Chemical mapping of a 177-nucleotide RNA with 2A3 and DMS.
As a SHAPE reagent, 2A3 marks flexible, mostly unpaired nucleotides at the ribose 2'-OH.
Conditions: 150 mM KOAc, 10 mM MgCl2 and 150 mM bicine (pH 8.5), 24 C.
Source: RMDB library M2PK50, as collected in RNAgym.
RNA sequence: GGGAACGACUCGAGUAGAGUCGAAAAGCCAUCGCUUUCGAGCGAUGGCAUUGCCCAAAGAGGACCUGGGGCUGUCUGGGCUGCUAAACUCAUCAGCCGUUCUACCGCUAAAUUUCGAUUUAGCGAAGGCCGUUAGUUAAUUCGUUAACUAACGGCCAAAAGAAACAACAACAACAAC
Reactivity to 2A3 in 0.01 (KOAc 150mM, MgCl2 10mM, bicine 150mM(pH8.5), 24C), signal-to-noise 1, nucleotides 027 to 126: g000c010c000a000u010c010g010c020u110u070u080c260g130a020g000c000g000a000u000g000g030c000a010u000u110g030c000c000c000a030a080a000g080a010g050g030a060c040c020u110g010g000g000g130c000u020g050u030c030u030g030g010g000c000u060g050c020u130a020a070a110c020u020c040a010u010c000a010g000c000c030g010u020u030c030u060a170c050c020g000c010u010a000a010a000u080u080u040c180g060a020u010u010u000a000g000c010g010a060a030
Reactivity to DMS in 0.01 (KOAc 150mM, MgCl2 10mM, bicine 150mM(pH8.5), 24C), signal-to-noise 2, nucleotides 027 to 126: g020c000c000a000u000c000g010c000u000u000u010c150g010a000g060c000g000a000u000g000g060c000a000u000u000g020c010c000c010a140a080a150g020a080g010g010a070c090c090u010g010g030g000g000c050u020g000u000c110u000g000g010g010c050u000g010c110u000a090a050a060c050u000c020a060u010c020a030g020c020c000g040u000u000c050u000a110c130c020g000c000u000a000a050a010u000u000u010c190g020a020u000u000u000a000g010c000g000a100a070